[RMDB]
RNA sequence: GGGAACGACUCGAGUAGAGUCGAAAAGAUAUGGAGUGUACUACCCACCUUGUGCCUGCGAAGAACAAAUAACCCUCGGAAACGAGGGUUAUUUGGGAGCAGGACACAAGAGGUACACUCCUAAGUCCAUAAUGCAGCGGUUCGCCGCUGCAUUAUGAAAAGAAACAACAACAACAAC
Reactivity to DMS in 0.01 (KOAc 150mM, MgCl2 10mM, bicine 150mM(pH8.5), 24C), signal-to-noise 1, nucleotides 027 to 126: g000a300u030a100u020g010g010a020g010u000g000u000a020c020u000a150c060c020c070a300c110c030u000u000g020u000g030c030c000u000g000c000g000a130a180g030a170a160c000a030a000a020u000a000a000c010c000c000u010c000g010g000a120a080a220c020g000a020g000g020g000u000u000a000u000u000u010g000g000g000a080g030c060a010g000g030a120c000a000c000a000a020g000a060g030g000u000a030c000a000c020u010c000c000u010a010a040g000u030c100